[RMDB]
RNA sequence: GGGAACGACUCGAGUAGAGUCGAAAAGAAGUGGAUUGCAGAUGCUAGAUUUGGAGAGAUGCAGUUUGUGCAAAGGAGGGUCUUGAAAAGGCCUUCGAAAUGUCUCUGCCAAGGCUAAAAUAAUGACAUUUUGUAUUUGCACAGCAUUUUCAUUGUACCAUAUUACCUCGUUCGCGAGGUAAUAUGGAAAAGAAACAACAACAACAAC
Reactivity to 2A3 in 0.01 (KOAc 150mM, MgCl2 10mM, bicine 150mM(pH8.5), 24C), signal-to-noise 6, nucleotides 027 to 156: g070a040a010g030u040g040g020a050u090u090g000c030a010g030a070u030g030c020u070a030g010a160u070u060u100g040g020a050g000a010g000a030u040g010c030a040g070u110u230u130g000u010g000c010a020a010a000g050g010a020g010g010g010u010c000u060u120g090a050a060a030a080g000g000c000c000u000u010c000g000a010a000a010u010g010u010c010u020c050u090g040c010c040a080a080g070g000c020u070a000a050a060a090u270a060a150u170g010a010c000a000u010u020u040u060g080u050a150u010u010u010g000c010a000c020a010g010c020a030u060u050u090u100c080a090u060u150g040u050a050
Reactivity to DMS in 0.01 (KOAc 150mM, MgCl2 10mM, bicine 150mM(pH8.5), 24C), signal-to-noise 2, nucleotides 027 to 156: g020a100a130g030u010g010g000a070u000u000g030c000a100g030a130u000g020c010u000a070g000a110u010u000u000g030g020a100g020a080g020a000u000g020c070a130g030u000u000u000g030u010g000c020a020a050a090g000g030a080g010g020g010u000c000u000u020g000a100a100a130a160g000g000c000c000u010u000c000g030a010a030a020u000g000u000c000u000c110u000g020c040c070a060a130g060g010c040u010a030a060a060a140u000a100a090u000g000a030c010a040u000u000u000u000g010u000a200u010u000u000g010c010a020c030a090g020c030a130u010u010u000u010c060a140u000u010g010u020a190